[RMDB]
RNA sequence: GGGAACGACUCGAGUAGAGUCGAAAAAGACCACCUCUACGGAGGUGGUCAAGUCACGUAGCUAGUACCAGGUUGGAAUACUAGAGCGUUAGUCCUGGGGCGUACGGUGGCAGUACGCUGCCACCGAUAAAACUUGAAUACUUCGGUAUUCAAGUAACGAUACUUUUGUGUUCGCACAAAAGUAUCGAAAAGAAACAACAACAACAAC
Reactivity to DMS in 0.01 (KOAc 150mM, MgCl2 10mM, bicine 150mM(pH8.5), 24C), signal-to-noise 1, nucleotides 027 to 156: a090g010a050c000c000a060c010c090u000c020u020a130c300g140g030a050g030g030u000g010g020u010c010a000a010g020u010c080a030c020g030u000a140g000c020u000a050g000u000a030c000c000a050g000g010u010u000g000g000a250a090u000a030c020u000a010g010a300g000c020g010u000u000a120g020u010c010c020u010g010g010g010g010c120g020u000a060c010g000g030u000g030g030c000a050g070u000a090c260g040c000u020g000c000c000a010c010c000g010a010u000a020a050a080a030c000u000u010g000a020a010u000a000c010u000u010c300g050g000u000a010u000u000c010a000a020g010u010a000a030
Reactivity to 2A3 in 0.01 (KOAc 150mM, MgCl2 10mM, bicine 150mM(pH8.5), 24C), signal-to-noise 1, nucleotides 027 to 156: a010g000a000c010c010a010c010c000u010c020u030a070c250g060g000a000g000g010u000g010g020u000c000a000a000g020u010c010a000c000g000u010a030g010c000u010a010g020u020a050c010c030a080g180g090u150u200g050g080a160a160u020a050c000u000a000g000a000g010c010g000u020u150a020g030u000c000c000u010g000g000g000g010c100g070u120a020c000g040g040u000g000g000c000a000g000u030a010c270g010c110u000g000c000c000a000c000c000g000a000u030a000a030a010a010c010u010u000g000a000a000u000a030c010u010u040c190g090g020u000a000u010u000c000a000a000g010u010a020a000